[RMDB]
RNA sequence: GGGAACGACUCGAGUAGAGUCGAAAAGAUAUGGACCACUGGUGGAGCUGCUCGGAAACGAGGCAGCGUUGAAACCAUUGGUCCUAAGUCAAAGAGGUAUACGACUGUUCGCAGUCGUAUACCUCAACAUGUGUAGACACUUCGGUGUCUACACAUGAAAAGAAACAACAACAACAAC
Reactivity to DMS in 0.01 (KOAc 150mM, MgCl2 10mM, bicine 150mM(pH8.5), 24C), signal-to-noise 3, nucleotides 027 to 126: g020a040u000a300u010g000g000a010c010c000a020c090u010g010g010u000g000g000a120g020c000u000g000c000u000c000g020g000a100a060a160c010g010a020g010g000c000a010g010c000g010u000u000g010a160a160a030c010c000a020u000u000g000g010u000c000c000u000a000a070g000u000c070a070a130a100g000a010g020g000u000a010u000a010c000g000a010c000u000g010u010u000c170g010c000a000g030u000c000g010u000a010u000a000c000c000u000c000a000a060
Reactivity to 2A3 in 0.01 (KOAc 150mM, MgCl2 10mM, bicine 150mM(pH8.5), 24C), signal-to-noise 2, nucleotides 027 to 126: g010a020u060a050u160g020g000a000c000c010a020c030u010g000g000u020g000g040a020g000c000u000g000c000u030c020g000g020a120a120a070c020g040a090g260g170c020a010g040c000g010u140u030g000a010a000a000c010c000a000u000u010g000g000u000c000c000u010a030a010g040u020c040a100a070a110g000a000g030g000u010a010u000a000c020g000a000c000u010g060u100u130c300g000c160a010g010u000c000g030u000a000u000a000c000c000u000c000a010a010
Chemical mapping of a 177-nucleotide RNA with DMS and 2A3. Reactivities are given for positions 27 through 126. The data come from the RNA Mapping Database (RMDB), library TTRDEL. The 2A3 profile rests on 4,492 reads. The reactions ran in a buffer of 150 mM KOAc, 10 mM MgCl2 and 150 mM bicine (pH 8.5), at 24 C. DMS adducts were read by reverse transcription with MarathonRT.